[RMDB]
RNA sequence: GGGAACGACUCGAGUAGAGUCGAAAAAUGGAAGAGAAUGGACGAAAAGGGAAAAGGGAAGGGUAAUGUCAGAAUCCAUCCUCCUGAGUAAGCUCUCACGUGGUUCCAUGAAACUUGCUUUGGUUUCCAUGUGUAUUAAUGUGCAGCUAGGUCAUCAGAGAGUAUCGAGGUUCGCCUCGAUACUCUCAAAAGAAACAACAACAACAAC
Reactivity to 2A3 in 0.01 (KOAc 150mM, MgCl2 10mM, bicine 150mM(pH8.5), 24C), signal-to-noise 1, nucleotides 027 to 156: a010u120g000g010a070a000g000a000g000a070a080u150g010g050a010c000g050a020a030a050a140g020g000g000a000a040a120a120g100g050g050a040a110g050g000g080u150a130a010u150g080u110c020a040g100a050a030u000c030c000a020u030c010c000u000c030c000u020g000a000g020u050a070a050g020c010u000c000u000c060a010c020g070u020g020g030u010u000c020c000a000u030g060a000a140a000c080u170u190g100c010u150u040u080g040g000u030u010u080c040c010a010u050g040u000g000u020a050u040u080a070a140u250g010u010g070c060a010g030c020u050a040g000g050u040c020a090u020c070a060